[RMDB]
RNA sequence: GGGAACGACUCGAGUAGAGUCGAAAAGCGUUGCGAUGGACCGAAACUAUUCCUGGAGCGGAGGUGGUGCUUUUUCCACUCGUGUCGGGGUGGCCGCAUGCCUCAGUGGACACGGAUCUCUUAGCAACGUCACUGAGGGGUUCGCCCCUCAGUGACGAAAAGAAACAACAACAACAAC
Reactivity to DMS in 0.01 (KOAc 150mM, MgCl2 10mM, bicine 150mM(pH8.5), 24C), signal-to-noise 2, nucleotides 027 to 126: g010c070g010u000u000g000c030g000a130u000g000g040a090c020c000g000a110a030a080c120u000a120u000u000c000c020u010g000g000a210g000c060g000g000a040g000g010u020g000g030u000g000c050u000u010u000u000u010c010c020a030c010u000c010g030u000g020u010c130g020g000g000g020u000g000g020c300c200g000c030a050u010g000c000c000u000c020a020g030u000g020g020a090c170a040c100g000g000a080u010c010u000c070u000u020a200g020c040a040a040
Reactivity to 2A3 in 0.01 (KOAc 150mM, MgCl2 10mM, bicine 150mM(pH8.5), 24C), signal-to-noise 2, nucleotides 027 to 126: g020c020g000u020u040g030c050g010a040u070g020g070a000c020c020g100a100a090a000c040u030a120u100u130c000c000u080g130g010a060g010c120g030g030a010g070g000u110g000g070u120g020c000u110u160u000u130u000c000c000a000c020u030c010g120u130g170u160c100g070g040g000g000u030g030g000c030c000g010c010a020u090g000c000c010u040c010a020g080u100g030g080a020c020a010c120g040g050a220u000c070u000c000u130u080a010g020c040a060a060
Annotation
Structure probing data (DMS and 2A3) for a 177-nucleotide construct. The 2A3 profile rests on 1,336 reads. The reactions ran in a buffer of 150 mM KOAc, 10 mM MgCl2 and 150 mM bicine (pH 8.5), at 24 C. DMS adducts were read by reverse transcription with MarathonRT. Values are in units of 0.01, from 0 to 300, in steps of 10. Values cover nucleotides 27 to 126. For DMS, 1,644 sequencing reads were counted. 2A3 adducts were read by reverse transcription with SuperScript II with manganese.